Description:
Structure probing data (DMS and 2A3) for a 177-nucleotide construct. High DMS reactivity at an A or C suggests that its Watson-Crick edge is free. Reactivities are given for positions 27 through 126. The RNA was probed in 150 mM KOAc, 10 mM MgCl2 and 150 mM bicine (pH 8.5) at 24 C. The 2A3 profile rests on 3,282 reads.
RNA sequence: GGGAACGACUCGAGUAGAGUCGAAAAGACCGUCAGUUAGACGGAAGAAGUGCAUAAAUCCACAUCGGAAGACGAGAUAUUGCACAAAUGUGGAUAAGCGUACGGAUCUACGUGCGCUAAACGUGAGCAUAUAGCUGCCGUUCGCGGCAGCUAUAUGAAAAGAAACAACAACAACAAC
Reactivity to DMS in 0.01 (KOAc 150mM, MgCl2 10mM, bicine 150mM(pH8.5), 24C), signal-to-noise 4, nucleotides 027 to 126: g000a090c000c010g000u000c010a150g030u040u040a120g010a020c000g010g000a180a090g000a100a130g030u000g030c030a040u010a110a120a050u000c000c040a020c130a090u000c080g010g070a160a070g020a110c060g030a160g000a050u010a070u000u000g000c050a040c060a100a030a070u040g000u030g010g000a080u030a060a030g010c000g000u000a000c020g000g000a140u050c170u050a060c030g000u010g000c000g010c010u010a000a020a070c120g020u020g010a120g000
Reactivity to 2A3 in 0.01 (KOAc 150mM, MgCl2 10mM, bicine 150mM(pH8.5), 24C), signal-to-noise 4, nucleotides 027 to 126: g100a020c000c010g000u000c010a080g030u060u280a050g000a000c010g080g050a010a010g070a030a000g040u020g000c050a060u120a140a250a020u050c010c000a010c020a070u010c090g190g060a080a070g050a090c030g040a020g020a130u090a090u110u220g000c010a010c060a060a090a030u130g010u060g000g040a030u040a090a010g000c000g000u000a000c010g010g020a040u060c010u080a070c010g000u000g000c000g010c010u020a030a010a000c070g020u080g080a020g020